[RMDB]
RNA sequence: GGGAACGACUCGAGUAGAGUCGAAAAAGUGUAAUGGACUACCAAGACAGUGACGGUUGACGGGAAAUUAGGGUUUUGUACCGGAGAGGGAGCCUGAGAGAUUGCUCCCACGUCCAAGGACGGCAGCAUUGGCGCAAUUCUUCGGAAUUGCGCCAAUAAAAGAAACAACAACAACAAC
Reactivity to DMS in 0.01 (KOAc 150mM, MgCl2 10mM, bicine 150mM(pH8.5), 24C), signal-to-noise 1, nucleotides 027 to 126: a060g000u030g020u000a010a080u000g000g000a090c050u010a160c070c060a090a050g000a060c060a040g000u000g000a120c040g020g000u040u000g000a050c150g000g060g000a030a030a070u050u020a000g000g030g020u000u000u000u000g000u020a070c000c050g030g000a130g030a210g000g000g000a010g020c010c070u010g030a260g000a150g000a110u070u000g030c060u000c010c000c010a060c030g010u000c010c030a180a130g000g000a020c000g000g000c130a080g020c060

Chemical mapping of a 177-nucleotide RNA with DMS. The data come from the RNA Mapping Database (RMDB), library RFM100. The reactions ran in a buffer of 150 mM KOAc, 10 mM MgCl2 and 150 mM bicine (pH 8.5), at 24 C.